Conditions: 150 mM KOAc, 10 mM MgCl2 and 150 mM bicine (pH 8.5), 24 C. Chemical mapping of a 177-nucleotide RNA with DMS and 2A3. Reactivities are rounded to 0.1 and cut off at 0 and 3. 2A3 adducts were read by reverse transcription with SuperScript II with manganese.
[RMDB]
RNA sequence: GGGAACGACUCGAGUAGAGUCGAAAACGCAACCUGGCCUCAGCGGCACUGGCUGCGGUGUAGAUCGGCUUGAGGUCGACGCUGAUCUUGUCCCAGUACUUGCGGGAGGCAUACCGGAAAGUGUUGCUCCCGAUCGUACGUUCGCGUACGAUCGGGAAAAAGAAACAACAACAACAAC
Reactivity to DMS in 0.01 (KOAc 150mM, MgCl2 10mM, bicine 150mM(pH8.5), 24C), signal-to-noise 1, nucleotides 027 to 126: c110g000c000a020a020c030c010u000g000g000c000c010u000c120a190g020c050g000g030c030a050c040u010g000g010c130u000g010c050g000g000u000g000u000a070g010a020u000c010g000g000c070u010u000g000a100g050g000u000c060g030a080c250g050c010u000g000a010u000c000u000u020g010u010c160c010c000a110g000u000a060c020u000u010g040c030g010g030g000a020g000g040c070a090u040a120c040c040g020g040a060a110a070g010u000g000u000u000g000c020
Reactivity to 2A3 in 0.01 (KOAc 150mM, MgCl2 10mM, bicine 150mM(pH8.5), 24C), signal-to-noise 2, nucleotides 027 to 126: c020g020c020a000a010c030c020u040g100g000c010c000u130c120a300g300c150g090g050c070a120c100u070g040g010c000u040g040c040g010g060u090g070u060a020g000a050u020c030g020g050c050u060u220g160a120g070g240u170c100g020a030c000g000c020u050g010a030u000c060u050u050g090u060c060c000c010a020g030u020a190c030u050u190g040c020g020g060g020a060g060g000c020a030u080a100c020c000g010g200a190a020a030g170u180g020u070u040g010c000

2A3 is a SHAPE reagent: it acylates the 2'-hydroxyl of flexible nucleotides of all four kinds.